This 177-nucleotide RNA was probed chemically with DMS. It was measured as part of the RMDB library TTRINS. DMS adducts were read by reverse transcription with MarathonRT. Conditions: 150 mM KOAc, 10 mM MgCl2 and 150 mM bicine (pH 8.5), 24 C.
[RMDB]
RNA sequence: GGGAACGACUCGAGUAGAGUCGAAAAGAUAUGGAAAGGUCAAUCACCUGGCAGCUUUUGACGAAGUCACAUUCGGAAACGAAUGAAGUCUUCGAUAAGCUGCAGGUGAUUGACCUUUCCUAAGUCAGAUACAUCGCAAGUUCGCUUGCGAUGUAUCAAAAGAAACAACAACAACAAC
Reactivity to DMS in 0.01 (KOAc 150mM, MgCl2 10mM, bicine 150mM(pH8.5), 24C), signal-to-noise 1, nucleotides 027 to 126: g010a010u010a300u000g000g000a000a000a030g020g000u000c010a040a020u000c000a000c000c000u000g020g040c000a010g000c000u000u000u000u000g010a300c160g010a020a020g010u000c030a260c000a020u000u000c000g020g000a120a110a260c000g000a010a010u000g020a090a120g010u000c000u000u000c000g000a120u000a010a010g030c000u000g020c000a070g000g020u000g000a000u000u000g000a010c000c000u000u000u000c000c000u000a040a050g000u000c040a110